[RMDB]
RNA sequence: GGGAACGACUCGAGUAGAGUCGAAAAGCACUCACAAGUAACUGACAAUUCGCAUAUUAAAGCACUAACAGGUAUAUUUUAUGUUACAGGUUAUUCAGCGAUAGUUAUGACCUCCCGGUUACGUGCGUUGGGUGGAAGAAUUAAUAAUAUACGCACCGCGUGCUAAAGUUUUCGAACUUUAGCACGCAAAAGAAACAACAACAACAAC
Reactivity to DMS in 0.01 (KOAc 150mM, MgCl2 10mM, bicine 150mM(pH8.5), 24C), signal-to-noise 1, nucleotides 027 to 156: g000c020a000c010u010c000a090c030a090a180g000u000a030a090c040u030g010a110c030a080a170u000u030c040g020c000a170u000a080u000u000a020a050a300g000c050a180c110u000a020a030c050a030g010g010u000a050u000a050u000u000u000u040a160u030g010u010u000a040c040a050g050g000u010u010a030u000u000c110a160g050c050g030a200u000a080g050u000u020a030u010g010a020c090c020u010c040c000c000g050g000u000u000a000c040g030u000g040c040g060u000u000g000g090g060u000g000g020a070a100g010a090a090u010u000a070a080u000a050a120u010a130u000a100c000g030c000a030c050c090
Reactivity to 2A3 in 0.01 (KOAc 150mM, MgCl2 10mM, bicine 150mM(pH8.5), 24C), signal-to-noise 3, nucleotides 027 to 156: g030c000a040c040u070c030a040c040a060a120g060u070a190a040c010u030g120a010c070a050a160u080u030c040g000c040a030u100a020u250u230a130a100a070g010c010a050c070u080a070a030c080a090g060g040u040a090u040a040u210u150u060u090a110u180g020u020u060a040c040a050g040g040u020u040a060u130u110c090a060g010c010g060a060u070a070g060u120u060a070u180g140a150c000c010u000c000c010c010g080g000u110u100a080c040g000u010g000c010g010u030u040g040g010g020u030g010g020a050a010g020a090a000u120u080a060a050u090a100a030u130a010u040a070c020g030c020a000c070c150